[RMDB]
RNA sequence: GGGAACGACUCGAGUAGAGUCGAAAAAACUCUUCGCUGUCCGCUAACGGGGUGGAUUACUACAACGCCGUGAAGCAAGCCCUCACUGAAUUGGGUACUGCUGACAACGGAGAAAAACUAAUAGUACCACCUUAUGAAUUUUCGAAUUCAUAAGGUGAAAAGAAACAACAACAACAAC
Reactivity to 2A3 in 0.01 (KOAc 150mM, MgCl2 10mM, bicine 150mM(pH8.5), 24C), signal-to-noise 6, nucleotides 027 to 126: a000a000c040u030c000u020u010c020g010c010u010g000u000c010c010g010c030u030a040a000c010g000g020g030g000u020g010g040a110u150u140a140c050u050a050c020a190a010c070g120c100c020g030u020g020a040a010g040c030a060a060g010c010c010c000u040c030a140c130u170g140a250a140u160u050g020g000g000u060a080c040u060g010c010u000g000a010c000a020a000c010g020g000a010g000a030a050a000a010a000c080u120a070a110u060a110g050u050a040c010
Reactivity to DMS in 0.01 (KOAc 150mM, MgCl2 10mM, bicine 150mM(pH8.5), 24C), signal-to-noise 8, nucleotides 027 to 126: a120a060c130u000c000u000u000c010g030c020u000g010u000c010c130g000c030u010a180a020c020g010g010g010g040u000g010g020a190u010u000a090c180u010a110c050a110a060c020g000c010c010g020u000g000a140a060g010c120a090a130g000c020c010c010u000c300a160c240u000g000a080a130u000u010g000g010g030u000a080c160u010g010c060u000g000a030c030a020a010c010g000g000a020g000a020a030a060a080a100c100u010a060a120u010a090g000u010a120c200